[RMDB]
RNA sequence: GGGAACGACUCGAGUAGAGUCGAAAACACAGGAUCGUGUGGAAGUCCUGCUCGGGGCGGAAGCAUUAAAACCAUUCGAGCUAGCCAAUGCGUGGCGUGUCUCUCCGCAGCGUGUUGGCGAAUGUAACAAGCUGCCUCUCGUUCGCGAGAGGCAGAAGAAUAACAUUAAGUUCGCUUAAUGUUAUUCAAAAGAAACAACAACAACAAC
Reactivity to 2A3 in 0.01 (KOAc 150mM, MgCl2 10mM, bicine 150mM(pH8.5), 24C), signal-to-noise 5, nucleotides 027 to 156: c050a000c000a010g270g050a300u230c130g030u030g000u040g030g030a060a020g030u020c010c010u010g010c000u020c030g010g000g010g030c060g000g050a040a010g060c080a060u140u270a050a040a050a070c070c020a020u110u120c080g030a040g030c040u060a010g000c000c010a000a000u000g010c000g010u020g050g010c030g040u090g050u040c110u020c020u020c100c000g000c010a010g010c010g000u010g020u000u000g010g000c020g000a010a000u040g020u080a090a100c070a130a030g040c000u000g000c000c000u000c000u000c000g010u050u050c200g010c000g110a000g000a000g000g010c000a010g000a000a000
Reactivity to DMS in 0.01 (KOAc 150mM, MgCl2 10mM, bicine 150mM(pH8.5), 24C), signal-to-noise 3, nucleotides 027 to 156: c040a050c020a130g020g020a070u010c090g000u030g050u010g040g030a230a140g000u000c020c020u000g020c040u000c030g030g020g050g020c030g000g020a160a170g010c060a100u030u010a040a130a120a140c050c010a120u000u000c030g010a170g030c040u010a190g000c010c010a010a030u000g000c000g060u010g000g030c030g010u020g020u010c100u010c060u020c230c010g020c010a070g010c020g040u000g030u000u000g010g000c000g000a010a000u000g020u010a110a170c050a060a160g000c010u000g000c020c010u000c000u010c010g020u000u010c220g040c030g000a020g000a010g050g010c000a000g000a000a090
This 207-nucleotide RNA was probed chemically with 2A3 and DMS. Conditions: 150 mM KOAc, 10 mM MgCl2 and 150 mM bicine (pH 8.5), 24 C. Source: RMDB library M2RFPK, as collected in RNAgym.